Structure probing data (2A3) for a 177-nucleotide construct. For 2A3 the reverse transcriptase was SuperScript II with manganese. Reactivities are rounded to 0.1 and cut off at 0 and 3. The 2A3 profile rests on 844 reads. The reactions ran in a buffer of 150 mM KOAc, 10 mM MgCl2 and 150 mM bicine (pH 8.5), at 24 C.

RNA sequence: GGGAACGACUCGAGUAGAGUCGAAAAGAAAGAAAGAUAGCUGAACUACGAAGCCCGGGUUUUGUGUGUGCCGCGCUGUUUUGAGUACGUAGCACCACAUGAUUCGGCUUGGUAGUACAGGCUCAAACACGUAAGCGACGUUCGCGUCGCUUACGUGAAAAGAAACAACAACAACAAC
Reactivity to 2A3 in 0.01 (KOAc 150mM, MgCl2 10mM, bicine 150mM(pH8.5), 24C), signal-to-noise 2, nucleotides 027 to 126: g010a000a000a030g170a060a130a000g080a070u200a030g000c030u000g000a000a000c000u000a020c070g020a000a000g000c000c010c010g000g020g030u020u040u000u000g040u030g030u020g000u000g000c000c000g070c030g000c020u050g130u300u080u190u300g120a020g030u040a020c040g000u000a000g010c000a000c030c000a000c000a010u000g000a010u030u020c000g000g020c000u000u000g050g000u000a000g000u010a040c070a000g000g000c010u000c040a060a080a020